RNA sequence: GGGAACGACUCGAGUAGAGUCGAAAAUGAUUACACCCUUGCCAAUACUACAACAGAACCACUCAAACUUUUUGCUGCUGAGACUUUACGUGCCACUGAAGAGGCGUCUAAGCAGUCUUAUGCUAUUUCCAAAAUAUAUCUUCGGAUAUAUUUUGGAAAAAGAAACAACAACAACAAC
Reactivity to DMS in 0.01 (KOAc 150mM, MgCl2 10mM, bicine 150mM(pH8.5), 24C), signal-to-noise 2, nucleotides 027 to 126: u010g020a140u010u000a050c090a150c020c010c010u010u000g030c040c060a030a080u010a040c030u000a060c030a060a030c050a050g020a050a070c070c030a050c050u000c110a060a060a160c170u000u000u000u000u000g000c040u010g000c030u010g000a060g020a020c030u000u000u000a110c160g000u000g000c000c000a140c120u000g000a130a090g030a120g010g010c000g010u000c030u020a060a040g020c050a000g000u010c150u000u000a060u000g010c040u000a060u000u000
Reactivity to 2A3 in 0.01 (KOAc 150mM, MgCl2 10mM, bicine 150mM(pH8.5), 24C), signal-to-noise 3, nucleotides 027 to 126: u040g000a020u050u060a060c040a050c010c000c000u000u030g060c020c000a080a060u080a050c040u010a040c010a060a000c010a040g040a040a010c000c010a040c020u070c040a060a100a150c050u110u080u050u140u120g000c010u010g000c000u000g000a010g030a030c030u130u130u090a060c100g020u050g000c010c000a030c030u080g050a100a020g060a100g100g010c000g000u010c010u020a020a010g010c000a000g020u030c020u040u100a070u060g010c010u040a070u040u020